[RMDB]
RNA sequence: GGGAACGACUCGAGUAGAGUCGAAAAUCAAAUAGUCGCAAACGACGAAACUUACGCUUUAGCCGCUUAAGGCUAGCCGUUGCAGCAGUCGGUCAAUGGGCUGUGUGGUGAAAGCCACCGCAACGUCAUCUUACAUUGACUGGUUUCCAGCCGGGUUUAGUCUACAUUUGUUCGCAAAUGUAGACUAAAAAGAAACAACAACAACAAC
Reactivity to DMS in 0.01 (KOAc 150mM, MgCl2 10mM, bicine 150mM(pH8.5), 24C), signal-to-noise 1, nucleotides 027 to 156: u000c080a090a220a290u010a060g000u000c020g030c070a130a070a100c010g020a050c020g000a070a070a070c070u000u030a140c160g010c030u010u010u000a040g060c000c000g060c070u010u010a040a120g020g000c010u020a080g020c020c050g040u010u010g020c000a290g000c000a110g020u000c020g020g010u010c070a060a090u010g020g000g030c000u010g030u000g040u010g000g000u000g010a140a120a220g030c000c000a040c020c090g050c020a020a040c030g010u000c120a070u010c160u000u000a080c050a040u000u000g010a030c000u000g090g010u000u000u000c060c020a130g020c060c020g080g040g010u000u000
Reactivity to 2A3 in 0.01 (KOAc 150mM, MgCl2 10mM, bicine 150mM(pH8.5), 24C), signal-to-noise 4, nucleotides 027 to 156: u070c010a030a030a080u150a100g020u020c030g070c160a090a160a160c090g030a000c010g070a070a010a030c110u180u150a060c080g020c030u150u110u090a020g010c000c000g080c150u200u230a150a060g020g000c000u010a000g000c000c000g030u010u040g000c010a010g000c010a020g020u020c010g020g000u010c010a000a010u020g020g000g000c010u010g030u040g020u030g050g000u020g080a170a060a020g010c020c000a020c000c000g000c010a020a000c000g050u070c010a060u060c040u140u130a030c010a020u000u030g020a010c000u020g030g020u040u060u000c020c040a090g040c010c030g030g010g020u020u010